[RMDB]
RNA sequence: GGGAACGACUCGAGUAGAGUCGAAAAGUUCCCUCUUAGCGUGGAGGUUUAACUACGCUCGUUCCCCAUAUCGGCGUGGGCGCACCGGAUUUAUAAAUCAAAGUCCUUUAGGGAACGGAAAGGAACAAAAAUCCAUGGGAGUUCGCUCCCAUGGAAACAAUAAGUUACACUUCGGUGUAACUUAUUGAAAAGAAACAACAACAACAAC
Reactivity to DMS in 0.01 (KOAc 150mM, MgCl2 10mM, bicine 150mM(pH8.5), 24C), signal-to-noise 2, nucleotides 027 to 156: g000u000u000c000c000c020u000c050u000u010a030g020c030g010u010g010g010a090g000g020u000u010u000a110a170c010u000a010c010g040c010u010c000g000u000u000c000c000c020c120a190u040a080u000c020g000g010c040g050u000g020g020g040c010g010c080a070c010c000g070g000a140u000u000u000a110u030a080a070a080u010c080a080a090a100g000u000c010c020u000u010u000a070g010g010g020a030a040c040g000g010a050a070a100g030g000a060a150c000a010a120a100a110a130u000c000c000a020u010g000g020g010a050g030u010u000c280g000c000u010c000c010c010a000u010g010g000a020a020a030
Reactivity to 2A3 in 0.01 (KOAc 150mM, MgCl2 10mM, bicine 150mM(pH8.5), 24C), signal-to-noise 2, nucleotides 027 to 156: g010u050u050c010c000c000u020c010u000u060a000g000c010g000u000g020g040a060g040g060u160u150u180a070a030c010u030a010c000g000c040u000c010g000u010u020c040c010c010c010a030u060a050u120c020g000g000c000g030u030g030g010g000c040g000c010a020c000c010g000g010a030u030u210u000a160u260a060a100a020u130c160a090a010a030g000u050c010c010u030u050u100a060g010g000g030a020a030c040g040g000a060a070a030g030g020a020a000c050a060a100a040a000a020u030c000c000a010u000g000g000g000a010g020u060u120c090g060c070u000c000c010c000a010u000g000g000a020a000a000